This 177-nucleotide RNA was probed chemically with DMS and 2A3. 2A3 adducts were read by reverse transcription with SuperScript II with manganese. DMS (dimethyl sulfate) methylates the pairing face of unpaired adenines and cytosines. Reactivities are given for positions 27 through 126. It was measured as part of the RMDB library OK2TST. The DMS profile rests on 8,634 reads.
[RMDB]
RNA sequence: GGGAACGACUCGAGUAGAGUCGAAAAACAGGUCCGUCAGGUCGUAUUGUGUCCAGCCGGGGCGAAGAUCCGCGUGCACGGUCGGCUGGGCGACUCCGUCGUCGCCGACAGGGUAGGUGGUACGCAGCACAAGAUUGCUUUUCGAAGCAAUCUUGUGAAAAGAAACAACAACAACAAC
Reactivity to DMS in 0.01 (KOAc 150mM, MgCl2 10mM, bicine 150mM(pH8.5), 24C), signal-to-noise 5, nucleotides 027 to 126: a060c100a130g010g010u010c020c030g010u000c070a100g010g010u000c030g010u000a090u010u010g020u000g010u000c010c020a080g000c060c050g000g000g010g020c030g010a080a080g000a110u010c030c040g010c030g020u000g000c040a070c040g010g010u000c000g000g000c020u010g040g010g000c010g010a010c020u010c170c190g000u000c030g020u000c020g010c020c000g000a020c020a060g010g020g020u000a060g010g020u000g000g000u000a040c060g010c060a130g000
Reactivity to 2A3 in 0.01 (KOAc 150mM, MgCl2 10mM, bicine 150mM(pH8.5), 24C), signal-to-noise 3, nucleotides 027 to 126: a000c040a020g030g090u030c020c020g050u050c030a040g000g050u030c030g020u080a180u120u300g080u020g040u030c030c000a000g000c000c050g010g010g030g010c020g020a040a010g030a070u050c010c030g020c040g080u050g010c050a020c040g040g000u020c010g020g000c010u160g100g010g000c000g010a000c020u070c100c120g000u020c000g010u020c010g000c010c000g000a010c010a020g060g030g020u080a070g020g070u060g030g000u030a010c060g010c050a020g040